[RMDB]
RNA sequence: GGGAACGACUCGAGUAGAGUCGAAAAGAACACAGUUCAACAUGAAUCAUGUUCGUCGCGCCUUGGCUGCGAAGAAACGCAAUUUGCGGUAUGACGCAGAAGAUGAUGUAUACCACUGUCUGGAUUGGUGAGUGAUAAUCUUCGGAUUAUCACUCACAAAAGAAACAACAACAACAAC
Reactivity to DMS in 0.01 (KOAc 150mM, MgCl2 10mM, bicine 150mM(pH8.5), 24C), signal-to-noise 3, nucleotides 027 to 126: g000a080a010c040a090c100a050g000u000u000c020a130a160c250a090u040g020a050a050u000c060a180u000g000u020u010c050g010u000c080g010c020g020c030c000u050u000g000g020c010u000g000c050g000a100a040g020a060a110a110c110g010c070a070a170u000u040u010g040c000g020g010u010a020u010g010a070c000g010c010a070g000a070a060g020a070u030g000a020u010g010u010a020u030a130c100c030a040c030u000g020u010c060u020g010g000a150u030u010g010
Reactivity to 2A3 in 0.01 (KOAc 150mM, MgCl2 10mM, bicine 150mM(pH8.5), 24C), signal-to-noise 6, nucleotides 027 to 126: g040a020a000c090a000c000a090g020u040u040c020a080a090c050a190u180g100a080a050u080c010a020u040g130u080u010c010g070u040c040g000c000g020c030c000u050u090g080g000c010u020g000c030g010a030a020g060a050a180a020c090g000c140a100a240u040u040u190g000c000g000g010u080a070u130g030a030c010g000c030a000g010a010a010g000a020u100g010a020u050g050u060a050u040a080c030c030a040c050u050g000u070c060u070g050g090a190u110u080g100